[RMDB]
RNA sequence: GGGAACGACUCGAGUAGAGUCGAAAACACAGCAGUAUUUGAAGUUGUGAUCAGUUCUUCAAAGGUGCAGUCUAGACAAAAUUAUGUAUAGAAGGAAUAGGAGAAGAUAUCACUAAGGAAGCAAAAAUCACCCUGAAAGUGGAGCUAGAGAAGCCCACCUGACCUACCUAUUCGUAGGUAGGUCAGGAAAAGAAACAACAACAACAAC
Reactivity to 2A3 in 0.01 (KOAc 150mM, MgCl2 10mM, bicine 150mM(pH8.5), 24C), signal-to-noise 1, nucleotides 027 to 156: c080a010c010a020g070c030a060g020u150a140u250u140u230g070a130a040g010u070u060g020u020g000a040u120c090a010g020u020u000c000u010u010c000a080a080a050g000g040u000g000c000a040g040u060c090u050a040g060a060c130a010a160a010a070u190u150a230u190g020u010a100u040a110g010a060a030g010g000a000a030u050a150g010g040a010g000a000a000g010a010u050a010u080c010a010c010u000a020a010g010g000a000a000g030c030a000a000a030a060a060u000c070a100c000c020c020u030g090a000a040a090g000u020g000g010a080g000c040u050a010g000a010g010a230a040g030c010c000c020a000
Conditions: 150 mM KOAc, 10 mM MgCl2 and 150 mM bicine (pH 8.5), 24 C. This 207-nucleotide RNA was probed chemically with 2A3. 2A3 adducts were read by reverse transcription with SuperScript II with manganese.